The data come from the RNA Mapping Database (RMDB), library TTRINS.
The record gives the reactivity of an RNA of 177 nucleotides to 2A3 and DMS.
The RNA was probed in 150 mM KOAc, 10 mM MgCl2 and 150 mM bicine (pH 8.5) at 24 C.
The DMS profile rests on 5,207 reads.
For 2A3, 15,893 sequencing reads were counted.
RNA sequence: GGGAACGACUCGAGUAGAGUCGAAAAGAUAUGGAACCUUCUGACUCGCAUCAGAGGGUAUUGAUAUCGGAAACGAUAUCAAUACCUACCCACCUGAUGAACUACGAGGAUGAAGGUUCCUAAGUCAGAACUUAUAUUUGUUCGCAAAUAUAAGUUCAAAAGAAACAACAACAACAAC
Reactivity to 2A3 in 0.01 (KOAc 150mM, MgCl2 10mM, bicine 150mM(pH8.5), 24C), signal-to-noise 4, nucleotides 027 to 126: g020a020u080a070u160g000g000a000a000c010c000u000u000c010u040g200a070c020u000c010g020c020a000u000c000a010g120a190g150g000g000u000a000u010u010g000a000u000a000u000c000g020g000a060a070a020c020g000a000u000a000u000c000a000a010u010a010c010c010u080a100c110c050c010a070c010c010u010g000a010u010g020a100a100c140u220a080c300g000a010g030g000a000u090g000a020a010g000g000u000u000c010c000u000a010a000g030u000c030a030
Reactivity to DMS in 0.01 (KOAc 150mM, MgCl2 10mM, bicine 150mM(pH8.5), 24C), signal-to-noise 6, nucleotides 027 to 126: g000a040u010a300u010g010g000a010a010c000c000u010u000c010u010g010a300c020u000c000g010c010a010u000c000a010g000a120g020g000g010u000a000u000u020g000a000u000a000u000c000g010g000a110a070a200c000g010a020u000a000u010c000a010a010u000a000c010c000u010a060c130c080c190a300c170c010u000g020a010u000g020a080a060c130u030a300c010g000a010g000g000a210u000g000a010a010g010g010u000u000c000c000u010a000a060g010u010c050a090